[RMDB]
RNA sequence: GGGAACGACUCGAGUAGAGUCGAAAAGUUUGAUCCAGUUGAAAAUGAAGCCAUACAUGAAGUUUAUGCAAAACUUGGACCCAUUGUAGCCAAUGCUAUGCUUAAAUGUGUUGCUUUUUGCGAUGCGAUAGUGGAAAAAGGCUAUAUAGGUGUUAUACCGUAUCAUUUAAUUCGUUAAAUGAUACGGAAAAGAAACAACAACAACAAC
Reactivity to DMS in 0.01 (KOAc 150mM, MgCl2 10mM, bicine 150mM(pH8.5), 24C), signal-to-noise 4, nucleotides 027 to 156: g010u000u010u010g020a150u000c030c020a120g010u020u020g000a090a070a100a140u000g010a100a040g050c000c040a130u000a080c060a060u000g030a060a150g010u010u000u000a030u000g020c070a070a060a070a060c060u010u000g040g010a090c010c010c040a140u010u000g030u000a050g020c000c010a050a200u010g020c020u000a110u000g000c090u000u010a050a080a070u010g020u030g020u000u010g020c010u000u000u000u010u000g010c000g010a100u010g010c060g010a060u000a060g030u010g020g000a060a040a050a070a140g020g010c020u000a030u010a060u000a070g010g020u010g010u000u000a110u010a140
Reactivity to 2A3 in 0.01 (KOAc 150mM, MgCl2 10mM, bicine 150mM(pH8.5), 24C), signal-to-noise 5, nucleotides 027 to 156: g040u060u070u090g040a060u030c010c010a010g030u050u060g140a080a070a070a080u120g050a040a010g020c020c010a040u040a080c010a030u110g060a090a010g020u070u090u090a090u130g030c020a030a030a040a090c020u010u040g030g010a020c010c020c020a070u040u120g030u040a010g020c020c030a090a010u100g000c030u050a010u090g010c010u070u140a090a110a040u110g010u010g000u010u020g010c010u080u070u020u110u230g040c020g000a010u020g000c000g050a050u070a090g040u040g050g000a040a030a040a040a040g010g000c000u010a010u010a010u020a070g040g000u040g020u120u080a080u060a040

An RNA of 207 nucleotides, treated with DMS and 2A3 and read out base by base.
For DMS, 9,049 sequencing reads were counted.
For DMS the reverse transcriptase was MarathonRT.
For 2A3, 3,222 sequencing reads were counted.
2A3 adducts were read by reverse transcription with SuperScript II with manganese.
The reactions ran in a buffer of 150 mM KOAc, 10 mM MgCl2 and 150 mM bicine (pH 8.5), at 24 C.
It was measured as part of the RMDB library OK3TST.